About this RNA:
This 177-nucleotide RNA was probed chemically with DMS and 2A3. Source: RMDB library OK2TST, as collected in RNAgym. The RNA was probed in 150 mM KOAc, 10 mM MgCl2 and 150 mM bicine (pH 8.5) at 24 C.
RNA sequence: GGGAACGACUCGAGUAGAGUCGAAAAAAAUGUUUUUGUCUGGGGUGGGCUUGACUGGCCAACGGCAGACACUUUCGGCAGGUUUGUCUUAUAGGGAUCUUCUGCAAAUGUGCCAACUGUAAUAAGCGAACUACAUGGAUUUCGAUCCAUGUAGUUCAAAAGAAACAACAACAACAAC
Reactivity to DMS in 0.01 (KOAc 150mM, MgCl2 10mM, bicine 150mM(pH8.5), 24C), signal-to-noise 2, nucleotides 027 to 126: a040a050a070u010g000u000u010u000u010u010g010u000c020u000g010g010g000g050u010g000g000g020c000u000u010g010a140c230u020g000g010c010c000a050a030c040g000g000c030a020g000a060c030a040c080u000u020u000c090g020g010c020a040g000g000u000u000u000g020u010c040u020u000a080u000a070g010g010g000a070u030c050u000u000c070u010g000c040a030a020a040u010g010u000g000c010c000a040a070c090u010g000u000a070a080u010a100a120g020c240
Reactivity to 2A3 in 0.01 (KOAc 150mM, MgCl2 10mM, bicine 150mM(pH8.5), 24C), signal-to-noise 2, nucleotides 027 to 126: a000a000a040u180g070u010u120u010u040u060g030u030c040u040g170g020g070g000u070g000g000g010c000u120u070g140a130c060u090g040g010c010c010a050a020c010g210g000c000a000g010a010c020a000c020u030u040u090c020g040g010c030a050g120g000u040u030u020g080u020c070u140u120a210u220a160g110g000g050a140u020c000u150u020c010u070g000c000a000a000a050u130g030u020g050c000c000a010a040c040u040g030u110a050a070u120a220a000g110c080